[RMDB]
RNA sequence: GGGAACGACUCGAGUAGAGUCGAAAAGACAGCAGCUGUGGAUGCCAGGCCCCCAGGAGUUGUUACUGAAGUUGCUGCUGGACAGCUCACCUUUCACUGAGCUCCACAUAGCACCCGUGGUGAUGGAGUACUGAGACAGGUUCGCCUGUCUCAGUACAAAAGAAACAACAACAACAAC
Reactivity to DMS in 0.01 (KOAc 150mM, MgCl2 10mM, bicine 150mM(pH8.5), 24C), signal-to-noise 2, nucleotides 027 to 126: g020a120c080a040g030c030a090g000c050u010g000u000g020g010a060u000g030c000c020a060g000g000c030c000c000c020c020a170g010g020a080g010u000u000g000u000u010a130c070u010g010a130a150g020u000u000g000c020u010g000c090u000g000g010a030c060a080g000c020u000c020a070c090c110u000u010u000c130a160c110u000g000a130g000c000u000c030c000a020c040a060u000a080g010c010a110c020c030c030g010u000g020g010u000g010a090u000g000g010a300